The record gives the reactivity of an RNA of 177 nucleotides to 2A3 and DMS. DMS adducts were read by reverse transcription with MarathonRT. The 2A3 profile rests on 21,142 reads. For DMS, 36,347 sequencing reads were counted. Source: RMDB library OK1LIB, as collected in RNAgym.
[RMDB]
RNA sequence: GGGAACGACUCGAGUAGAGUCGAAAACGUGAACAUCGCUCUGCUAAGUCCCGUCGUUCUUCCAGUCAGAGCGAGAUUGUAAGCAACCUUAUGCGCAAUGAAGACAUAGAGGGACUUCUUGAAUAAGAUAUAUAUCACCAUUCGUGGUGAUAUAUAUAAAAGAAACAACAACAACAAC
Reactivity to 2A3 in 0.01 (KOAc 150mM, MgCl2 10mM, bicine 150mM(pH8.5), 24C), signal-to-noise 9, nucleotides 027 to 126: c050g110u130g120a050a020c030a120u010c000g000c000u010c000u030g070c050u060a040a020g030u030c020c010c010g070u050c020g010u040u020c010u090u020c010c000a050g090u130c010a000g010a000g010c030g000a010g010a020u030u050g030u070a110a060g000c010a030a110c020c040u140u150a060u130g020c050g000c020a020a050u150g040a100a040g030a030c050a050u170a040g130a050g030g000g010a010c000u030u030c030u040u130g070a130a080u120a150a030g070
Reactivity to DMS in 0.01 (KOAc 150mM, MgCl2 10mM, bicine 150mM(pH8.5), 24C), signal-to-noise 9, nucleotides 027 to 126: c110g000u010g010a100a130c140a120u010c000g010c000u000c010u000g010c160u020a050a050g000u010c030c020c040g010u010c050g000u010u000c010u000u020c030c120a080g000u030c010a010g000a030g010c000g010a020g000a060u010u000g010u010a080a140g010c070a070a130c160c080u020u020a040u010g010c040g010c060a040a050u020g000a110a080g010a080c100a080u030a070g020a070g010g000g000a060c050u000u010c080u010u010g010a120a090u050a070a090g000